[RMDB]
RNA sequence: GGGAACGACUCGAGUAGAGUCGAAAAGAUAUGGAGCCGAGGGAGCUACGCAAUCGGAAACGAUUGAUGUAGCAUCGAUCUCGGAACUACUCCUAAGUCAAAACAACGAGAGUUCGCUCUCGUUGAACCAUACAUCCACGUUCGCGUGGAUGUAUGGAAAAGAAACAACAACAACAAC
Reactivity to DMS in 0.01 (KOAc 150mM, MgCl2 10mM, bicine 150mM(pH8.5), 24C), signal-to-noise 4, nucleotides 027 to 126: g010a010u000a080u000g010g020a020g020c030c000g000a010g010g020g000a020g030c000u000a000c000g000c010a010a000u000c000g010g010a040a020a070c010g030a000u000u000g000a040u010g030u000a000g010c000a250u010c170g010a040u010c010u000c010g000g020a050a080c150u010a240c010u000c000c000u010a030a150g010u000c020a100a080a090a240c010a010a010c000g000a030g010a010g020u000u010c300g020c020u000c000u000c000g000u000u000g000a070a190
Reactivity to 2A3 in 0.01 (KOAc 150mM, MgCl2 10mM, bicine 150mM(pH8.5), 24C), signal-to-noise 3, nucleotides 027 to 126: g010a010u030a030u050g010g000a000g000c000c000g020a000g020g000g010a020g020c000u000a000c010g000c010a010a000u010c000g010g030a020a000a000c020g000a000u000u020g060a070u060g030u010a000g000c010a020u200c000g000a010u000c010u010c000g000g030a030a010c020u090a060c000u000c010c000u000a020a000g010u020c030a030a000a120a160c010a000a010c000g000a000g010a000g020u110u160c300g050c150u000c010u000c010g000u000u000g000a000a000